An RNA of 207 nucleotides, treated with 2A3 and read out base by base. The 2A3 profile rests on 1,521 reads. The reactions ran in a buffer of 150 mM KOAc, 10 mM MgCl2 and 150 mM bicine (pH 8.5), at 24 C.
[RMDB]
RNA sequence: GGGAACGACUCGAGUAGAGUCGAAAACUUACCGAUCUGACUGAAGAUUCAACGCUGGUAGAUGGUUUUCUGGCUCAGAUUCACUGCCUGCCAUGUGUACCGAUUAAUGAGGUGGCAAAAGAGAAACUGCCACAUUACGUCAUGAGUGCAACCGCAGAUCACACGUUACCUUCGGGUAACGUGUGAUAAAAGAAACAACAACAACAAC
Reactivity to 2A3 in 0.01 (KOAc 150mM, MgCl2 10mM, bicine 150mM(pH8.5), 24C), signal-to-noise 3, nucleotides 027 to 156: c030u060u090a090c010c050g040a010u050c030u070g090a050c030u030g030a090a020g030a090u150u100c090a120a040c060g060c150u100g050g060u070a090g040a130u110g040g000u030u010u050u000c080u050g180g010c020u080c100a020g030a080u080u070c090a080c060u050g010c020c010u010g020c020c010a130u200g020u000g000u060a040c060c030g030a040u070u140a100a050u120g050a010g090g060u020g000g000c040a000a010a050a050g230a030g040a070a100a020c050u040g020c010c010a030c030a010u060u070a030c070g050u040c030a060u180g060a030g070u030g020c020a020a020c000c050g000c010a000g010